[RMDB]
RNA sequence: GGGAACGACUCGAGUAGAGUCGAAAAUUUGAGCCGGGCUAACAAAGGUGGGAGGCACCCAACCCUUCGGAAGAGCCGAGUGGGAAGGCUAAGCGAAACCAAGACAAAAUAAUAAAAUAAAAGAGAAUACGUAAUAGUAGUUCGCUACUAUUACGUAAAAAGAAACAACAACAACAAC
Reactivity to 2A3 in 0.01 (KOAc 150mM, MgCl2 10mM, bicine 150mM(pH8.5), 24C), signal-to-noise 1, nucleotides 027 to 126: u070u010u060g030a010g070c100c000g000g040g020c000u060a090a020c010a150a050a030g100g000u080g020g000g030a030g060g000c020a050c000c000c000a010a050c000c000c000u020u020c030g070g020a240a040g000a080g220c000c010g000a010g060u050g020g000g050a010a000g000g000c070u050a080a030g000c030g070a030a000a050c030c020a100a000g020a080c020a040a220a070a040u300a120a050u300a110a090a040a050u300a090a180a140a050g120a000g000a060a040
Reactivity to DMS in 0.01 (KOAc 150mM, MgCl2 10mM, bicine 150mM(pH8.5), 24C), signal-to-noise 2, nucleotides 027 to 126: u020u000u000g010a130g000c020c020g010g030g000c130u010a100a060c060a090a080a050g000g000u010g020g010g000a070g000g010c080a080c070c030c020a020a180c070c010c060u020u000c010g000g000a210a090g000a100g020c010c000g000a050g010u000g000g000g030a040a200g000g000c080u020a030a110g030c040g000a060a160a050c040c010a030a110g010a050c050a040a060a010a050u010a080a130u020a060a120a060a030u030a050a050a050a150g000a170g010a090a080